[RMDB]
RNA sequence: GGGAACGACUCGAGUAGAGUCGAAAACUCAGGAGGCUGAGGCAGGAGAAUCACUUCAACCUGGGAGGUAAAGGUUACAGUGAGCUGAGAUCACGCCACUGUACUCCAGCCUGGGUGACAGAGCGAGCCGGGUGUACAAUUUCGAUUGUACACCCGGAAAAGAAACAACAACAACAAC
Reactivity to DMS in 0.01 (KOAc 150mM, MgCl2 10mM, bicine 150mM(pH8.5), 24C), signal-to-noise 2, nucleotides 027 to 126: c020u000c000a090g000g000a180g000g010c060u000g010a120g000g000c050a110g000g000a070g000a030a090u020c060a090c040u010u020c120a070a020c000c000u010g000g000g040a190g000g020u000a090a130a150g020g000u040u000a010c010a000g000u000g000a140g000c010u010g010a110g010a090u060c150a120c120g010c000c000a030c010u000g050u000a020c060u000c050c020a120g000c000c040u000g010g000g010u000g010a050c100a080g000a050g000c080g000a080g000
Reactivity to 2A3 in 0.01 (KOAc 150mM, MgCl2 10mM, bicine 150mM(pH8.5), 24C), signal-to-noise 3, nucleotides 027 to 126: c030u020c010a020g010g060a070g120g000c090u110g030a030g040g000c040a040g000g070a050g080a090a050u100c060a030c090u040u010c030a070a050c010c010u020g040g000g000a040g040g050u130a170a040a090g060g020u150u040a000c010a000g000u010g050a100g070c010u010g050a070g050a190u250c070a030c170g000c000c000a000c000u000g000u000a020c000u000c020c010a020g040c030c000u000g010g000g000u020g010a030c040a060g080a000g020c040g020a010g050